[RMDB]
RNA sequence: GGGAACGACUCGAGUAGAGUCGAAAAUGGCGGUGAUGUCACUCCAGUUGACCAAUACAUGUGUGGCGUUGAUGGAAAACCCAUUAGUGCCUACGCAUUUUUAAUGGCCAAGGAUGGAAUAACCAAAGAUAUGCCUAUGCUUCGGCAUAGGCAUAUCAAAAGAAACAACAACAACAAC
Reactivity to DMS in 0.01 (KOAc 150mM, MgCl2 10mM, bicine 150mM(pH8.5), 24C), signal-to-noise 1, nucleotides 027 to 126: u020g010g020c120g040g020u020g010a080u020g010u000c010a140c100u010c030c000a040g000u010u000g000a020c000c030a020a080u000a030c300a000u000g000u020g030u000g000g010c000g020u000u000g010a000u000g010g020a100a100a170a180c300c000c000a000u000u000a010g000u000g000c020c000u020a020c000g030c020a000u000u000u000u000u000a000a080u000g000g000c020c000a090a070g000g020a060u000g000g020a030a040u030a220a140c020c020a050a150a090
Reactivity to 2A3 in 0.01 (KOAc 150mM, MgCl2 10mM, bicine 150mM(pH8.5), 24C), signal-to-noise 1, nucleotides 027 to 126: u070g070g010c040g020g090u120g040a060u130g000u060c000a020c060u020c010c010a130g080u040u030g050a030c000c000a000a060u070a070c060a010u010g020u010g000u000g050g010c020g020u000u020g010a000u010g000g030a030a060a060a160c020c010c000a000u000u020a010g030u000g000c000c020u030a010c000g000c000a010u010u010u000u000u080a100a140u030g020g020c010c010a010a000g040g040a020u050g040g010a040a050u040a040a020c020c000a140a030a000
The data come from the RNA Mapping Database (RMDB), library 15KREP. The record gives the reactivity of an RNA of 177 nucleotides to DMS and 2A3. For 2A3 the reverse transcriptase was SuperScript II with manganese.